[RMDB]
RNA sequence: GGGAACGACUCGAGUAGAGUCGAAAAAACAAUGCAUCCAGCAUGCGAUCCAUUGUCGUAGUAAAGCUUACGGAACAUGUCAGCGGAGUGGGCCAGGCUGGCGGCCAGCAAUGCUGCCAUAUAUUCCGGCAUACCGUAGACCUCCUGAUUAAUAUCAUAACACGUAGUGUUUCGACACUACGUGUUAAAAAGAAACAACAACAACAAC
Reactivity to 2A3 in 0.01 (KOAc 150mM, MgCl2 10mM, bicine 150mM(pH8.5), 24C), signal-to-noise 6, nucleotides 027 to 156: a000a000c050a020a010u030g010c000a010u020c020c000a030g070c070a180u160g030c120g030a010u030c080c010a030u010u040g020u020c060g030u050a060g030u020a060a090a050g030c030u070u070a060c050g000g020a030a020c050a070u020g010u010c000a000g000c000g010g000a010g030u050g010g030g020c020c010a040g080g090c040u100g080g050c050g010g020c020c000a010g020c000a010a040u050g000c000u000g000c000c000a020u070a010u020a030u070u010c000c010g000g000c010a040u050a040c020c030g050u030a020g070a100c000c010u060c000c010u050g100a090u190u170a120a120u240a080u300c190a060
Reactivity to DMS in 0.01 (KOAc 150mM, MgCl2 10mM, bicine 150mM(pH8.5), 24C), signal-to-noise 4, nucleotides 027 to 156: a020a020c020a060a030u000g020c100a050u010c050c030a250g030c070a130u000g040c100g000a070u000c040c030a090u000u010g020u000c020g000u000a180g010u000a050a060a080g020c040u010u000a130c030g010g010a050a040c060a030u010g010u000c000a050g010c010g010g020a300g030u010g000g040g010c010c010a110g040g030c050u020g020g050c080g020g020c020c020a090g030c040a060a280u010g020c000u000g010c020c010a040u000a070u010a090u000u000c010c000g010g000c060a100u000a070c000c000g000u000a090g010a060c040c020u010c040c020u010g000a100u000u000a110a080u010a100u010c050a210
This 207-nucleotide RNA was probed chemically with 2A3 and DMS. The reactions ran in a buffer of 150 mM KOAc, 10 mM MgCl2 and 150 mM bicine (pH 8.5), at 24 C. The 2A3 profile rests on 4,530 reads.